[RMDB]
RNA sequence: GGGAACGACUCGAGUAGAGUCGAAAAUGAGUAACAUUUGCUAGUAGAGUUAGUUUCCUUGGACUCAGUGCUAUGUAUUUUUCUUAAUUAUCAUUACAGAUAAUUAUUUCUAGCAUGUAAGCUAUCGCUUGUGAAGUAUCUUCGGAUACUUCACAAGAAAAGAAACAACAACAACAAC
Reactivity to 2A3 in 0.01 (KOAc 150mM, MgCl2 10mM, bicine 150mM(pH8.5), 24C), signal-to-noise 2, nucleotides 027 to 126: u060g000a010g130u110a120a060c010a060u030u050u080g010c000u010a030g080u030a090g120a000g100u060u060a020g000u030u030u000c000c000u010u040g030g030a020c000u020c050a020g030u010g070c000u030a030u110g060u060a250u180u210u040u110u060c000u000u050a010a030u010u020a000u020c000a010u010u300a080c000a020g010a020u010a000a000u010u010a070u070u060u010c000u000a010g000c010a000u040g040u110a140a020g000c000u060a040u300c070g000
Reactivity to DMS in 0.01 (KOAc 150mM, MgCl2 10mM, bicine 150mM(pH8.5), 24C), signal-to-noise 3, nucleotides 027 to 126: u000g000a270g020u000a090a120c040a030u010u000u010g000c020u020a040g010u000a190g000a040g020u010u000a070g000u010u000u000c010c010u010u010g020g000a080c020u010c140a150g020u000g000c010u000a020u010g000u010a030u000u010u010u030u010c110u020u010a010a030u000u000a000u000c000a070u010u010a210c070a160g010a010u010a000a010u000u000a020u010u000u000c030u000a030g010c010a020u000g000u010a110a110g020c030u000a060u000c140g010